[RMDB]
RNA sequence: GGGAACGACUCGAGUAGAGUCGAAAAUGAUGACUUUGGUAUAAAACGGGCUGUACUGGUCCGAAAUAUGCGUGUAAAUCUGCACGCCUGGCUCCUGACCGUAUUUCAGAUUGACCUGGCCUGCAUAAGCUACACUCCAGUUCGCUGGAGUGUAGCUAAAAGAAACAACAACAACAAC
Reactivity to DMS in 0.01 (KOAc 150mM, MgCl2 10mM, bicine 150mM(pH8.5), 24C), signal-to-noise 1, nucleotides 027 to 126: u010g020a060u040g010a140c040u000u020u000g000g020u000a040u000a060a010a150a270c060g000g000g040c000u000g090u030a120c260u000g000g020u000c020c020g030a030a050a120u000a040u000g010c020g010u010g030u000a040a090a070u010c140u000g010c010a040c100g010c000c090u000g020g000c020u000c090c000u000g000a100c160c090g020u000a110u010u000u000c050a020g000a040u020u010g000a080c070c010u000g010g040c010c020u000g000c090a080u010a060